[RMDB]
RNA sequence: GGGAACGACUCGAGUAGAGUCGAAAAAAGGCCCAGACUCCAUGGUGGAAGUUAAAGGGCAUUUCCAAGUUAAGGCUAAGACUUGCUUUUCUAACUAAGAGAAUGUGCUCAUGCAUUGCUUGUGUAGCGUAUUCGACUUUUUCGAAAGUCGAAUACGAAAAGAAACAACAACAACAAC
Reactivity to DMS in 0.01 (KOAc 150mM, MgCl2 10mM, bicine 150mM(pH8.5), 24C), signal-to-noise 4, nucleotides 027 to 126: a020a060g000g010c020c000c000a190g000a050c010u000c010c000a270u020g040g000u020g020g010a060a060g010u000u000a050a110a090g010g000g010c010a050u000u000u000c010c000a100a070g030u010u010a050a080g010g020c040u000a090a110g000a080c080u010u000g020c040u000u000u010u000c070u000a080a050c140u000a050a050g010a060g000a040a040u000g020u000g000c080u010c120a080u000g000c050a050u000u000g010c040u000u000g010u000g010u000a050g010
Reactivity to 2A3 in 0.01 (KOAc 150mM, MgCl2 10mM, bicine 150mM(pH8.5), 24C), signal-to-noise 3, nucleotides 027 to 126: a000a000g070g010c020c010c000a000g030a000c000u000c010c010a080u240g270g030u150g100g140a160a130g040u020u050a190a110a120g020g000g010c000a000u020u020u000c000c000a010a020g030u040u170a050a020g060g000c080u050a090a030g060a140c020u070u060g050c000u070u070u070u040c030u080a080a160c030u050a120a000g030a000g030a070a020u080g020u030g020c050u060c110a090u150g010c000a030u070u100g010c010u080u060g040u040g000u130a020g050

An RNA of 177 nucleotides, treated with DMS and 2A3 and read out base by base. Reactivities are given for positions 27 through 126. The RNA was probed in 150 mM KOAc, 10 mM MgCl2 and 150 mM bicine (pH 8.5) at 24 C. For 2A3 the reverse transcriptase was SuperScript II with manganese. For 2A3, 2,143 sequencing reads were counted. The DMS profile rests on 3,546 reads.